[RMDB]
RNA sequence: GGGAACGACUCGAGUAGAGUCGAAAAAAGUCUCUAUGGAUUCUUCGAGAUAAAGUCUUCAGUGUAUUGUUUGAUCACUGGAUAGAGAAUUAUCAGCCCUAUUAGGUUCGGAAUUGCCAUCAGUCCGCAACCGCAUUAAGUUCGCUUAAUGCGGUUGAAAAGAAACAACAACAACAAC
Reactivity to DMS in 0.01 (KOAc 150mM, MgCl2 10mM, bicine 150mM(pH8.5), 24C), signal-to-noise 2, nucleotides 027 to 126: a100a090g000u000c000u000c000u000a040u000g010g010a080u010u010c070u010u000c080g010a120g020a060u010a040a050a120g000u000c010u000u000c000a010g010u000g000u000a020u000u000g020u000u010u010g020a060u000c010a010c010u000g010g010a060u010a040g020a040g020a070a050u000u000a050u010c130a170g000c020c000c010u010a120u010u000a110g020g020u000u000c030g000g020a040a070u000u000g010c020c030a090u000c070a070g030u000c030c030g010
Reactivity to 2A3 in 0.01 (KOAc 150mM, MgCl2 10mM, bicine 150mM(pH8.5), 24C), signal-to-noise 2, nucleotides 027 to 126: a000a000g070u040c040u000c000u010a090u080g080g020a120u050u170c080u100u100c100g060a030g000a100u130a170a090a070g010u000c020u050u070c100a000g030u000g110u080a120u140u070g280u230u300u300g060a020u070c000a000c000u000g000g000a010u050a030g020a010g020a070a000u080u050a040u120c040a040g080c000c000c010u060a150u100u210a060g070g020u050u040c000g030g020a130a120u100u090g100c030c030a070u100c020a060g060u000c010c010g060